The record gives the reactivity of an RNA of 177 nucleotides to DMS and 2A3.
The reactions ran in a buffer of 150 mM KOAc, 10 mM MgCl2 and 150 mM bicine (pH 8.5), at 24 C.
It was measured as part of the RMDB library OK1LIB.
Values cover nucleotides 27 to 126.
DMS (dimethyl sulfate) methylates the pairing face of unpaired adenines and cytosines.
The DMS profile rests on 87,494 reads.
RNA sequence: GGGAACGACUCGAGUAGAGUCGAAAAGCUAGCCAGCGCACGAUGAGACUGCCGUGACGUCUAGCCUGCGUCUCAACUAGUCUCGAUCAAUCAAAACGCUGGGAUUGAUGUACGAGACUAGUACACAGUGUAUGGACUUCUUCGGAGGUCUAUACACAAAAGAAACAACAACAACAAC
Reactivity to DMS in 0.01 (KOAc 150mM, MgCl2 10mM, bicine 150mM(pH8.5), 24C), signal-to-noise 9, nucleotides 027 to 126: g010c020u010a070g010c100c020a060g010c050g010c030a030c040g010a100u020g010a110g010a090c090u020g010c060c030g000u000g000a070c040g010u020c010u010a080g000c020c020u020g000c060g000u010c010u000c030a120a040c010u000a000g000u000c000u000c000g000a090u000c020a030a010u000c010a070a060a100a120c130g010c100u020g000g020g000a040u000u000g000a010u000g000u040a240c030g000a010g000a010c000u000a010g000u000a060c200a080c200a110
Reactivity to 2A3 in 0.01 (KOAc 150mM, MgCl2 10mM, bicine 150mM(pH8.5), 24C), signal-to-noise 9, nucleotides 027 to 126: g020c020u030a010g020c020c040a020g010c020g010c030a010c030g060a060u160g030a040g080a110c080u120g070c060c010g030u040g050a160c020g020u070c030u020a020g000c000c010u040g030c030g080u000c010u000c020a020a020c000u000a000g000u000c000u000c000g010a020u000c000a030a010u000c010a010a040a060a110c110g040c120u130g050g010g010a000u000u000g000a000u010g040u110a050c010g000a000g000a000c000u000a000g000u030a010c090a000c010a030